[RMDB]
RNA sequence: GGGAACGACUCGAGUAGAGUCGAAAAAACAACAGUUUAUUCAGCAAACGCAAACUUUCGUAGUGCAAUUGGGGAACUAUAAUAAGGCACUAAUGGCACUCACUAACGAAAAAGUGAGCUUUACCACUAUUUGAUAGGAUUUCGAUCCUAUCAAAUAAAAAGAAACAACAACAACAAC
Reactivity to DMS in 0.01 (KOAc 150mM, MgCl2 10mM, bicine 150mM(pH8.5), 24C), signal-to-noise 6, nucleotides 027 to 126: a030a020c060a100a090c140a100g010u000u000u010a080u020u010c100a090g020c060a040a070a060c110g000c090a070a130a070c110u000u000u000c070g010u000a050g010u000g010c020a050a040u010u000g010g010g000g010a090a100c040u000a030u010a070a070u020a130a060g010g020c090a070c040u000a020a020u000g010g010c030a040c020u000c210a060c160u000a070a050c090g000a040a020a040a080a070g010u000g000a190g010c080u000u000u000a120c030c040a110c290
Reactivity to 2A3 in 0.01 (KOAc 150mM, MgCl2 10mM, bicine 150mM(pH8.5), 24C), signal-to-noise 5, nucleotides 027 to 126: a010a010c090a040a000c030a030g010u060u050u060a130u140u130c030a010g020c060a090a100a050c060g000c050a040a040a110c040u050u080u110c060g040u060a030g010u000g010c020a040a060u050u040g010g000g000g040a050a070c020u040a020u050a270a120u100a090a060g050g000c040a010c070u020a020a030u030g030g000c000a000c020u040c020a060c040u100a150a010c020g080a120a040a010a050a000g010u020g010a010g000c000u050u030u030a040c020c000a040c060
An RNA of 177 nucleotides, treated with DMS and 2A3 and read out base by base. For DMS the reverse transcriptase was MarathonRT. The DMS profile rests on 6,014 reads. The data come from the RNA Mapping Database (RMDB), library OK2TST.